The record gives the reactivity of an RNA of 177 nucleotides to DMS and 2A3. The reactions ran in a buffer of 150 mM KOAc, 10 mM MgCl2 and 150 mM bicine (pH 8.5), at 24 C. For 2A3, 1,891 sequencing reads were counted.
RNA sequence: GGGAACGACUCGAGUAGAGUCGAAAACGUAGUCUCCACAUUCUCGUGCCCAAGCCAUAGCGCGAUGACGGUCUGAUCGACCCCAUGAUGCAGGAGCUCCAUCGCCGUGCUGUGACGCAGGAUAUGACGAUGGCCUAAUCUUCGGAUUAGGCCAUCGAAAAGAAACAACAACAACAAC
Reactivity to DMS in 0.01 (KOAc 150mM, MgCl2 10mM, bicine 150mM(pH8.5), 24C), signal-to-noise 1, nucleotides 027 to 126: c080g000u000a060g020u000c010u010c030c080a050c150a070u030u000c000u000c060g010u000g000c010c000c000a000a080g010c000c070a070u000a080g000c070g010c020g010a010u000g100a080c120g010g000u030c000u000g000a030u030c010g000a090c000c090c000c030a000u010g000a080u000g100c000a040g000g000a140g040c080u080c080c040a080u000c070g100c050c110g020u000g000c010u000g000u010g000a060c010g000c100a060g030g010a080u090a000u000g000a170
Reactivity to 2A3 in 0.01 (KOAc 150mM, MgCl2 10mM, bicine 150mM(pH8.5), 24C), signal-to-noise 3, nucleotides 027 to 126: c100g040u060a030g040u020c020u010c030c000a060c000a050u150u050c030u020c020g050u100g040c050c030c010a110a020g060c030c000a110u080a050g100c050g000c000g060a030u060g050a040c060g000g040u020c040u040g120a130u060c030g020a080c030c000c000c040a050u170g040a020u080g110c040a050g000g000a020g060c020u000c010c020a040u060c030g010c030c000g090u080g010c000u040g030u080g050a030c070g020c040a040g040g020a040u060a090u220g020a020